[RMDB]
RNA sequence: GGGAACGACUCGAGUAGAGUCGAAAAAGCCACAUUGUACUACCAGAACAAUGUUUUCAUGAGUACUUCCAAGUGUUGGGUUGAGGAAGACCUAACCAAAGGACCCCAUGAAUUUUGUUCUCAACAUACCAUGCAAAUAGUGGACAAAGAGGGUACCCUCUCCUAAGCUGUUCGCAGCUUAGGAGAGAAAAGAAACAACAACAACAAC
Reactivity to 2A3 in 0.01 (KOAc 150mM, MgCl2 10mM, bicine 150mM(pH8.5), 24C), signal-to-noise 4, nucleotides 027 to 156: a000g020c020c000a020c010a030u030u010g020u040a070c040u030a060c050c080a010g000a000a010c010a020a030u090g020u090u030u050u060c020a020u020g020a010g110u010a100c020u010u010c020c020a100a080g040u080g000u300u000g020g020g010u030u080g060a140g160g150a170a090g010a010c000c000u010a000a000c010c020a020a050a150g030g010a050c120c000c000c010a000u000g010a030a020u070u070u010u040g000u000u000c020u010c010a030a050c010a050u130a090c030c030a010u090g020c020a070a040a090u070a110g010u050g030g010a030c040a010a160a010g100a040g040g120g030u240a060c060c010
Reactivity to DMS in 0.01 (KOAc 150mM, MgCl2 10mM, bicine 150mM(pH8.5), 24C), signal-to-noise 1, nucleotides 027 to 156: a130g030c030c070a060c000a070u040u030g030u000a020c040u000a210c130c080a110g020a040a110c010a000a000u010g000u000u000u000u000c000a060u000g020a080g000u000a140c020u000u000c030c030a190a300g000u020g030u000u000g000g040g050u000u000g030a140g030g040a210a140g010a030c000c000u000a020a040c010c010a120a240a130g010g000a090c240c000c000c000a060u020g030a040a130u000u000u040u000g010u000u000c010u010c030a110a130c150a110u000a120c050c030a010u000g030c010a040a090a090u020a120g030u000g000g040a090c020a060a000a130g010a200g050g010g010u000a050c020c060